[RMDB]
RNA sequence: GGGAACGACUCGAGUAGAGUCGAAAAGUCCUCUCGCCUGGGCCUCUUCGCCGGGGGUCCUCCCUCUUCGUCCUUCUUCUUUCUCAACAUUCCGACGAUGUUUCCCAGCCAGGGGUUUUCAUCCUCACGACAACGCAGUUCGCUGCGUUGAAAAGAAACAACAACAACAAC
Reactivity to 2A3 in 0.01 (KOAc 150mM, MgCl2 10mM, bicine 150mM(pH8.5), 24C), signal-to-noise 9, nucleotides 027 to 129: g020u020c010c010u030c020u030c030g060c010c030u060g010g010g010c010c010u030c040u130u100c050g070c060c020g000g000g000g000g000u020c000c020u040c010c000c000u030c000u040u040c030g060u010c010c000u020u040c000u030u010c000u020u070u020c020u020c010a030a110c020a100u110u080c030c010g030a050c040g030a070u080g020u020u040u020c000c010c000a010g030c030c020a030g010g000g000g000u030u030u040u030c050a110u040c000c020u030c010a110c050g130a040
Reactivity to DMS in 0.01 (KOAc 150mM, MgCl2 10mM, bicine 150mM(pH8.5), 24C), signal-to-noise 9, nucleotides 027 to 129: g010u030c000c000u000c070u000c060g000c060c050u000g020g000g030c060c010u000c010u000u030c050g020c080c090g010g020g010g010g000u000c010c010u010c010c020c000u000c040u010u010c010g040u000c000c000u000u030c030u000u020c030u020u030u010c000u000c050a100a120c090a120u040u030c050c050g000a130c080g020a110u030g030u000u000u000c000c000c010a130g030c100c080a050g020g000g010g010u000u000u000u010c000a080u030c030c020u020c060a080c130g020a190
An RNA of 170 nucleotides, treated with 2A3 and DMS and read out base by base. For 2A3, 79,194 sequencing reads were counted. The RNA was probed in 150 mM KOAc, 10 mM MgCl2 and 150 mM bicine (pH 8.5) at 24 C. 2A3 adducts were read by reverse transcription with SuperScript II with manganese. For DMS, 84,528 sequencing reads were counted. It was measured as part of the RMDB library 15KLIB.